[RMDB]
RNA sequence: GGGAACGACUCGAGUAGAGUCGAAAAGGGCGAUAAGCGUCUUACCCGUGGGUGUUGAUAGUUUUGUCGGGUCAUCGCUUGCUGCAAGGCAUGGAUGAUAAUAGGGUGCCUAUCUUGCGCUAAUGGACAUACGAAUUGCAUUCGUGCAAUUCGUAUGAAAAGAAACAACAACAACAAC
Reactivity to 2A3 in 0.01 (KOAc 150mM, MgCl2 10mM, bicine 150mM(pH8.5), 24C), signal-to-noise 2, nucleotides 027 to 126: g050g000g000c040g020a130u110a220a130g110c000g010u020c030u040u040a060c040c000c000g020u110g050g020g000u100g000u090u170g050a100u060a140g040u110u060u080u130g080u010c010g030g000g070u020c020a030u000c020g030c280u040u020g000c000u020g020c040a060a080g040g000c020a000u040g040g050a030u080g040a020u060a100a080u060a110g100g000g020u080g010c040c000u000a070u030c000u020u080g000c040g030c060u060a140a020u180g070g030a000
Reactivity to DMS in 0.01 (KOAc 150mM, MgCl2 10mM, bicine 150mM(pH8.5), 24C), signal-to-noise 4, nucleotides 027 to 126: g010g020g020c060g010a240u010a080a160g000c030g020u010c030u000u000a130c030c010c050g010u010g010g020g020u000g010u010u000g000a060u000a080g010u000u010u010u000g010u000c050g010g010g000u000c020a020u000c020g010c040u000u000g000c020u000g010c240a080a120g000g000c010a010u000g000g000a030u000g010a050u010a070a100u010a100g000g000g010u000g010c090c030u000a060u000c040u000u000g000c050g020c060u000a080a120u000g000g010a300